[RMDB]
RNA sequence: GGGAACGACUCGAGUAGAGUCGAAAAGAUAUGGAGCCUCGCAGAUACCAACGUAACAUCAUUCGGAAACGAAUGUGGUUGGAGUAGAGGACUCCUAAGUCAAAAGCGUCACCUUCGGGUGACGCAACCAUCUCAGUACGUUCGCGUACUGAGAUGGAAAAGAAACAACAACAACAAC
Reactivity to DMS in 0.01 (KOAc 150mM, MgCl2 10mM, bicine 150mM(pH8.5), 24C), signal-to-noise 4, nucleotides 027 to 126: g000a060u000a300u000g000g000a020g010c010c010u000c000g010c110a180g010a080u000a040c000c000a000a010c000g020u000a050a070c150a040u020c010a010u000u000c000g000g010a110a100a180c000g020a010a000u010g020u010g000g000u000u000g000g000a060g030u000a030g010a020g010g010a090c010u000c000c000u000a020a060g010u010c060a050a070a130a150g010c000g010u000c000a010c000c000u010u000c210g010g010g020u000g010a000c010g000c000a010a020
Reactivity to 2A3 in 0.01 (KOAc 150mM, MgCl2 10mM, bicine 150mM(pH8.5), 24C), signal-to-noise 3, nucleotides 027 to 126: g000a030u060a060u160g020g000a000g000c020c010u030c040g080c300a020g030a120u070a090c000c020a030a010c010g130u160a090a040c030a180u290c000a000u040u040c010g010g050a040a050a060c020g000a000a000u010g000u020g060g000u020u020g000g000a020g000u040a050g010a010g000g060a090c010u000c000c000u020a100a020g080u020c010a000a070a000a180g000c010g010u010c000a010c010c000u000u070c300g150g000g000u000g000a000c000g000c020a000a000
Source: RMDB library TTRDEL, as collected in RNAgym.
Structure probing data (DMS and 2A3) for a 177-nucleotide construct.
For DMS the reverse transcriptase was MarathonRT.
Values cover nucleotides 27 to 126.